[RMDB]
RNA sequence: GGGAACGACUCGAGUAGAGUCGAAAAAAGAUUGGACACUCCUGGUCUAAGCUAAAAGACUUAGGUGUACAUAGGUAUUGGGAUCUCCCUGUAUUUAGGAGUUUUGCAAAAUCUGGAUGCAGCCUAGAACAUUCGCUGAUAUAAAAGGAGUGCAUUAAUGCAGGUAAUAUUUCGAUAUUACCUGCAUAAAAGAAACAACAACAACAAC
Reactivity to DMS in 0.01 (KOAc 150mM, MgCl2 10mM, bicine 150mM(pH8.5), 24C), signal-to-noise 5, nucleotides 027 to 156: a100a080g010a180u000u000g010g010a110c010a030c010u000c010c010u010g010g020u000c030u000a050a040g000c020u000a050a110a120a160g000a070c010u000u000a020g010g020u000g030u000a080c060a140u000a080g010g020u000a080u000u010g020g010g010a070u000c040u000c010c000c030u010g030u000a070u000u000u000a030g020g000a050g020u000u000u000u010g020c060a050a030a090a090u000c040u000g010g010a100u000g000c030a130g000c030c020u010a050g010a060a080c060a160u000u000c070g010c040u000g010a110u000a110u000a040a050a100a060g000g020a030g010u010g010c020a080u000u000a080
Reactivity to 2A3 in 0.01 (KOAc 150mM, MgCl2 10mM, bicine 150mM(pH8.5), 24C), signal-to-noise 6, nucleotides 027 to 156: a010a000g150a080u150u120g030g020a010c000a000c010u000c000c010u020g030g010u020c040u060a070a020g000c020u050a060a040a030a040g050a080c030u070u080a010g000g020u040g020u050a030c030a040u070a020g000g020u040a080u040u070g040g020g020a060u010c030u070c030c010c010u060g090u170a220u120u200u160a030g000g000a020g040u060u050u040u050g110c000a020a020a050a060u020c010u020g050g020a060u040g000c020a020g100c020c000u020a030g010a090a030c030a150u060u080c050g000c020u000g070a030u040a020u040a170a090a010a000g010g000a000g000u000g010c000a000u070u240a060